[RMDB]
RNA sequence: GGGAACGACUCGAGUAGAGUCGAAAAGUAAUAGAUAACUGGAUGCAGCGUAGGGCGCAACGCAUAUCCAGUACGAAUGGUACCUGUAAAUAAAAUAUGUGUCCUAGUACAAGUACCAACAGAAGGAUAAGCGAUGGUGAUGUCAAUCACAUUUGCAAUUUAGUACGUCAUUCGUGACGUACUAAAUAAAAGAAACAACAACAACAAC
Reactivity to DMS in 0.01 (KOAc 150mM, MgCl2 10mM, bicine 150mM(pH8.5), 24C), signal-to-noise 3, nucleotides 027 to 156: g040u000a080a080u020a110g020a130u010a060a040c020u000g010g030a040u000g040c120a110g000c020g030u000a070g020g050g020c000g060c000a090a050c020g020c000a140u000a060u010c010c000a040g010u000a050c120g000a120a140u000g010g040u000a030c010c010u000g010u000a030a100a100u000a080a060a120a160u000a090u000g010u000g030u010c010c020u000a100g020u000a040c020a010a000g000u000a020c010c000a030a150c100a090g010a120a070g010g000a120u010a070a120g030c020g000a070u000g010g020u000g030a050u020g000u000c230a070a080u000c030a020c060a120u020u020u000g050c040a120
Reactivity to 2A3 in 0.01 (KOAc 150mM, MgCl2 10mM, bicine 150mM(pH8.5), 24C), signal-to-noise 6, nucleotides 027 to 156: g040u050a020a130u090a090g110a110u110a110a060c020u010g020g010a010u060g100c200a110g000c230g000u030a050g020g010g000c000g000c010a020a000c000g020c010a020u010a010u150c000c000a000g010u000a000c030g060a110a120u070g000g000u010a000c010c030u020g010u050a010a140a100u150a030a050a060a020u190a070u060g040u010g020u030c000c020u000a020g010u010a010c010a020a010g000u010a020c000c000a000a020c040a040g200a160a030g080g020a040u070a100a030g000c010g030a010u060g050g110u030g010a050u040g090u160c060a030a050u030c010a020c020a050u070u070u190g020c000a010
Chemical mapping of a 207-nucleotide RNA with DMS and 2A3.
For DMS the reverse transcriptase was MarathonRT.
The 2A3 profile rests on 5,001 reads.
High 2A3 reactivity points to a flexible backbone, as in loops and unpaired stretches.